[RMDB]
RNA sequence: GGGAACGACUCGAGUAGAGUCGAAAAACAACAGAUAGCUGGAACCAGCGUAGAAUUCUACGCAUAUCCAUAGCGAAUGGUACCUGUAAAGAAAAUAAUUGUGGAUGUACAAGUACCAACAGCCGUAAAUGCCAUGGUGAUGUCAAUCACAUAUGCAUCAUUACGGACGAUUCGUCGUCCGUAAUGAAAAAGAAACAACAACAACAAC
Reactivity to 2A3 in 0.01 (KOAc 150mM, MgCl2 10mM, bicine 150mM(pH8.5), 24C), signal-to-noise 4, nucleotides 027 to 156: a000c030a020a000c000a000g110a170u170a020g050c050u040g030g010a060a130c100c040a060g000c000g020u010a000g040a200a220u300u040c010u010a000c000g010c030a020u040a040u060c020c010a020u060a020g000c020g040a030a080u060g000g000u000a010c000c010u010g030u070a050a100a040g150a040a110a030a040u230a030a070u130u190g070u060g100g050a070u050g000u010a010c000a030a010g010u000a010c000c000a000a030c020a070g040c010c020g060u090a030a090a000u080g000c050c020a060u060g010g020u030g010a030u020g150u180c070a110a080u040c000a020c000a030u080a010u070g010c000a030
Reactivity to DMS in 0.01 (KOAc 150mM, MgCl2 10mM, bicine 150mM(pH8.5), 24C), signal-to-noise 2, nucleotides 027 to 156: a110c030a070a090c040a110g020a100u000a040g020c060u000g000g010a090a110c150c080a210g000c000g130u000a030g020a250a190u000u000c010u000a020c080g000c000a060u020a110u020c020c050a050u000a030g040c020g000a120a160u000g010g000u000a030c000c000u090g020u010a060a030a140g000a150a070a100a160u020a070a100u000u000g000u000g030g040a190u010g010u000a020c020a040a030g010u000a030c030c020a030a090c100a180g000c040c050g000u020a050a060a110u000g040c070c030a070u000g000g040u000g000a060u010g010u000c230a070a050u000c060a030c020a120u000a040u000g020c070a190